[RMDB]
RNA sequence: GGGAACGACUCGAGUAGAGUCGAAAAGAUAUGGACCAAGAGCAACAGCCAUAAGGGAUCGGAAACGAUCCCAUGGACAUGCUCGACGUCCUAAGUCAAAAGGUAUCUAUCUUCGGAUAGAUACCAAUCCUAGUAGACAGUUCGCUGUCUACUAGGAAAAAGAAACAACAACAACAAC
Reactivity to DMS in 0.01 (KOAc 150mM, MgCl2 10mM, bicine 150mM(pH8.5), 24C), signal-to-noise 7, nucleotides 027 to 126: g000a060u010a300u000g000g010a010c000c020a080a250g010a020g000c000a030a080c290a170g000c000c000a020u010a120a070g010g000g010a000u010c000g000g010a110a070a150c000g000a000u000c000c000c000a000u000g000g000a040c100a150u010g000c010u000c000g000a300c300g010u000c000c000u000a040a080g000u000c040a080a070a110a110g010g000u000a000u000c000u000a000u010c000u000u020c210g010g010a010u000a000g010a010u000a000c000c010a030a020
Reactivity to 2A3 in 0.01 (KOAc 150mM, MgCl2 10mM, bicine 150mM(pH8.5), 24C), signal-to-noise 4, nucleotides 027 to 126: g020a000u060a020u110g000g000a000c010c030a060a040g010a000g010c020a010a170c070a150g170c010c000a040u080a160a290g000g000g010a010u000c010g030g000a050a050a030c000g010a000u000c040c010c000a000u000g010g000a060c010a090u070g000c000u000c000g000a010c020g000u020c000c000u010a060a010g030u030c010a000a060a040a160g020g000u020a010u000c010u000a010u010c010u030u100c250g040g000a000u000a000g000a000u000a000c000c010a000a000